[RMDB]
RNA sequence: GGGAACGACUCGAGUAGAGUCGAAAAAAAAAGCACGCGAAGCACGCGAAGCACCCGAAGCACGCGAAGCACGCGAAGCACGCGAAGCACGCGAAGCACGCGAAGCACGCGAAGCACGCGAAAAAAAGUACUCUACUAAGUUCGCUUAGUAGAGUACAAAAGAAACAACAACAACAAC
Reactivity to DMS in 0.01 (KOAc 150mM, MgCl2 10mM, bicine 150mM(pH8.5), 24C), signal-to-noise 1, nucleotides 027 to 126: a070a070a170a020a140g010c120a070c000g050c030g000a140a100g030c210a150c060g050c020g000a050a010g020c020a050c010c000c030g000a130a160g000c230a060c000g000c030g000a020a120g030c060a200c000g000c000g000a060a090g000c050a210c020g050c020g030a020a120g000c030a100c000g000c090g000a060a080g020c050a140c030g000c010g000a050a150g000c070a160c010g000c000g030a090a220g000c020a150c060g020c000g000a000a000a080a020a030a080a160
Reactivity to 2A3 in 0.01 (KOAc 150mM, MgCl2 10mM, bicine 150mM(pH8.5), 24C), signal-to-noise 2, nucleotides 027 to 126: a000a000a000a000a000g020c030a040c020g020c010g040a040a010g110c110a030c060g000c010g070a050a020g020c000a070c000c000c000g030a020a000g050c050a020c050g020c010g030a080a020g020c010a010c050g000c000g040a050a020g030c030a020c010g000c000g060a080a030g050c040a030c080g100c040g080a030a020g050c030a010c030g000c030g010a060a030g040c030a000c010g000c000g020a050a010g000c010a000c020g010c030g170a180a000a000a000a000a020a020
An RNA of 177 nucleotides, treated with DMS and 2A3 and read out base by base. Conditions: 150 mM KOAc, 10 mM MgCl2 and 150 mM bicine (pH 8.5), 24 C. It was measured as part of the RMDB library M2PK90.